[RMDB]
RNA sequence: GGGAACGACUCGAGUAGAGUCGAAAAAAGAGAGGUAGUGACAAGAAAUAACAAUGCAAGGCCAAUUUUUGGUUUUGUAAUUGGAAUGGUGGGAAUUUAAAACCUUCCCAGAGUAACAAUUGGAGGGCAAGUCUGGUGCCAGCAGCCGCGGUAAUUCACUAUUCACUAACUUCGGUUAGUGAAUAGUAAAAGAAACAACAACAACAAC
Reactivity to DMS in 0.01 (KOAc 150mM, MgCl2 10mM, bicine 150mM(pH8.5), 24C), signal-to-noise 2, nucleotides 027 to 156: a050a030g000a080g010a060g030g010u000a090g030u020g010a140c040a080a090g010a060a090a110u000a090a150c010a030a030u000g000c000a000a010g020g000c000c000a030a140u000u000u000u000u010g020g010u000u000u000u020g000u000a030a060u010u010g000g010a100a030u020g000g060u000g000g020g020a070a130u000u000u010a080a040a110a090c080c050u000u000c020c000c020a160g000a130g000u000a030a080c030a030a160u000u010g000g020a070g000g040g010c040a040a140g020u010c030u010g010g010u000g000c020c010a100g060c040a080g000c020c020g030c040g020g010u000a000a090u000u000c040
Reactivity to 2A3 in 0.01 (KOAc 150mM, MgCl2 10mM, bicine 150mM(pH8.5), 24C), signal-to-noise 1, nucleotides 027 to 156: a010a020g060a000g010a000g010g030u040a050g030u080g050a020c040a060a070g080a160a170a060u130a050a020c010a010a010u010g010c000a000a000g000g000c000c010a020a020u110u150u200u270u050g000g000u020u050u000u000g000u090a030a070u010u040g010g020a100a050u070g040g040u040g020g020g030a010a040u100u080u180a110a100a040a060c000c010u000u010c020c000c000a010g040a000g050u050a090a020c030a040a060u070u060g030g000a030g000g020g010c020a010a050g030u020c030u070g020g030u060g040c030c000a010g000c060a000g020c010c090g020c020g000g010u050a090a070u120u090c030